This 207-nucleotide RNA was probed chemically with 2A3 and DMS. The DMS profile rests on 1,547 reads.

RNA sequence: GGGAACGACUCGAGUAGAGUCGAAAAGUGACCAGCCAGACUUCACAGAGGCCUCAGGGCUUACUAUAAAUAAAUCACUGCUUUGUGCAAGCUGAGCCAAUGCAGUUCUUCCAACUGGCUGCUCCUCUCCAAGAACAAUCAGGACUUAGGUGGGCAACCAUUAGUACCUCUUCGGAGGUACUAAUGGAAAAGAAACAACAACAACAAC
Reactivity to 2A3 in 0.01 (KOAc 150mM, MgCl2 10mM, bicine 150mM(pH8.5), 24C), signal-to-noise 4, nucleotides 027 to 156: g130u110g050a070c040c010a000g000c000c000a030g030a130c080u090u070c200a080c040a120g050a020g060g000c010c030u110c110a080g070g060g050c030u120u110a110c050u100a060u160a200a140a080u150a070a120a030u200c030a010c000u010g010c010u060u040u010g090u120g030c040a100a120g090c050u120g080a020g030c000c010a000a000u020g000c000a020g020u050u070c050u100u030c040c030a080a070c060u020g010g000c000u000g000c000u000c000c000u010c000u010c010c010a060a010g080a070a060c050a060a060u160c100a070g020g020a020c040u080u140a040g040g000u060g000g040g000c050a050a010
Reactivity to DMS in 0.01 (KOAc 150mM, MgCl2 10mM, bicine 150mM(pH8.5), 24C), signal-to-noise 1, nucleotides 027 to 156: g010u010g030a060c090c020a020g010c000c060a110g020a090c100u000u040c040a050c030a090g010a090g010g020c030c050u010c200a120g050g010g010c010u010u000a040c040u000a170u000a020a020a110u010a080a050a070u010c040a050c020u010g000c050u010u010u010g040u020g040c040a110a110g010c110u010g010a120g020c020c020a030a060u000g010c030a030g020u000u000c040u000u010c060c090a080a090c030u000g000g000c010u000g010c000u000c030c030u000c040u070c050c040a140a060g000a100a080c070a050a020u000c000a010g010g010a100c100u000u010a040g020g030u000g020g040g030c030a060a150